[RMDB]
Background:
The record gives the reactivity of an RNA of 177 nucleotides to DMS and 2A3. The reactions ran in a buffer of 150 mM KOAc, 10 mM MgCl2 and 150 mM bicine (pH 8.5), at 24 C. Reactivities are rounded to 0.1 and cut off at 0 and 3. 2A3 adducts were read by reverse transcription with SuperScript II with manganese.
RNA sequence: GGGAACGACUCGAGUAGAGUCGAAAAGAUAUGGAUCCCUAAGGGAGCUCGGUGUCGGAAACGACACCAGAGCGAGGAUCUUAAGGGAUCCUAAGUCAAACAGCAGAUUGGUUCGCCAAUCUGCUGAGCUAAACGUUAUGUUCGCAUAACGUUUAGCAAAAGAAACAACAACAACAAC
Reactivity to DMS in 0.01 (KOAc 150mM, MgCl2 10mM, bicine 150mM(pH8.5), 24C), signal-to-noise 4, nucleotides 027 to 126: g010a000u000a010u020g000g000a000u000c010c000c000u000a020a020g000g000g000a010g020c000u000c000g010g010u000g010u000c000g010g010a010a010a010c000g010a010c000a010c000c000a010g010a000g020c000g000a080g010g010a030u000c000u000u000a040a180g010g000g000a010u000c000c000u000a000a080g000u000c010a170a140a300c010a010g010c000a010g010a020u000u000g000g010u000u020c300g030c000c000a010a010u000c000u000g010c010u000g000a040
Reactivity to 2A3 in 0.01 (KOAc 150mM, MgCl2 10mM, bicine 150mM(pH8.5), 24C), signal-to-noise 3, nucleotides 027 to 126: g000a000u010a000u050g000g000a000u000c000c000c000u000a000a000g020g010g000a030g010c010u000c010g010g010u000g010u000c000g000g000a010a010a000c000g000a000c000a000c010c020a000g000a000g010c000g000a010g020g010a010u000c000u030u020a150a230g010g000g010a000u000c000c000u000a000a000g000u000c010a050a070a140c010a010g000c010a000g010a010u000u010g040g080u080u220c300g060c110c000a000a000u000c000u000g000c000u000g000a010